[RMDB]
RNA sequence: GGGAACGACUCGAGUAGAGUCGAAAAGGUGGUUUUACGCUAGCGUAGGAUCUUUUUUGAUCCGGACCUUUUUUCCAUCUACGUUUGCUGAUUGGAACAGUUUGGUAGUAGGUCCAGCGUUCACCGAGGGAUUUGCCUACUUCGGUAGGCAGGUCCCAAAAGAAACAACAACAACAAC
Reactivity to 2A3 in 0.01 (KOAc 150mM, MgCl2 10mM, bicine 150mM(pH8.5), 24C), signal-to-noise 9, nucleotides 027 to 126: g010g000u030g010g060u050u080u120u160a010c010g000c020u030a030g070c080g300u110a090g000g000a000u010c000u070u140u100u050u140u260g000a000u000c000c000g000g000a000c000c000u020u060u020u000u080u030c010c010a020u020c020u050a060c070g050u040u060u070g200c070u090g090a300u190u280g080g030a060a030c010a030g050u070u060u060g050g010u030a050g010u010a010g010g000u000c000c010a000g000c000g000u010u030c010a000c010c000g000a070
Reactivity to DMS in 0.01 (KOAc 150mM, MgCl2 10mM, bicine 150mM(pH8.5), 24C), signal-to-noise 9, nucleotides 027 to 126: g000g020u000g000g000u020u010u020u010a010c010g010c020u010a100g000c170g030u030a110g010g000a000u000c000u000u020u030u020u030u010g000a010u000c010c000g010g010a010c010c000u000u010u020u020u030u010c010c020a040u030c040u020a080c100g010u010u010u010g020c060u020g000a190u030u040g010g020a060a060c030a060g010u010u010u000g000g010u000a030g010u010a020g010g000u000c000c010a060g010c010g010u000u020c020a030c000c000g000a140